[RMDB]
RNA sequence: GGGAACGACUCGAGUAGAGUCGAAAAGAUAUGGACGGGCAAGGGAGAUGAGUGUCGGAAACGACAUCCAUCAUCGAUCUUGCCGUCCUAAGUCAAACAGGACCUAGAGUUCGCUCUAGGUCCUGAACGACAUACUAACCUUCGGGUUAGUAUGUCGAAAAGAAACAACAACAACAAC
Reactivity to 2A3 in 0.01 (KOAc 150mM, MgCl2 10mM, bicine 150mM(pH8.5), 24C), signal-to-noise 1, nucleotides 027 to 126: g040a000u060a020u130g030g010a010c130g110g160g210c000a010a000g020g060g010a100g010a020u010g000a000g010u020g000u040c010g020g030a080a020a000c010g020a000c000a030u060c070c040a130u000c000a030u080c010g030a030u000c000u010u010g010c000c010g020u000c000c000u000a000a000g020u000c000a020a070a140c010a010g000g010a000c010c010u000a000g000a000g030u070u300c300g070c190u000c000u020a000g000g000u000c000c000u000g000a010a000
Reactivity to DMS in 0.01 (KOAc 150mM, MgCl2 10mM, bicine 150mM(pH8.5), 24C), signal-to-noise 3, nucleotides 027 to 126: g000a030u000a180u010g010g010a010c000g030g000g010c010a010a010g000g000g010a300g020a010u010g000a100g020u000g020u000c000g000g000a040a060a120c020g030a010c010a000u010c090c100a050u010c000a290u010c170g000a220u010c000u000u000g010c000c000g020u000c000c010u000a000a040g000u010c020a130a160a300c000a000g000g000a000c000c000u010a010g020a020g000u010u010c250g050c010u000c000u010a000g000g010u000c000c000u000g000a010a100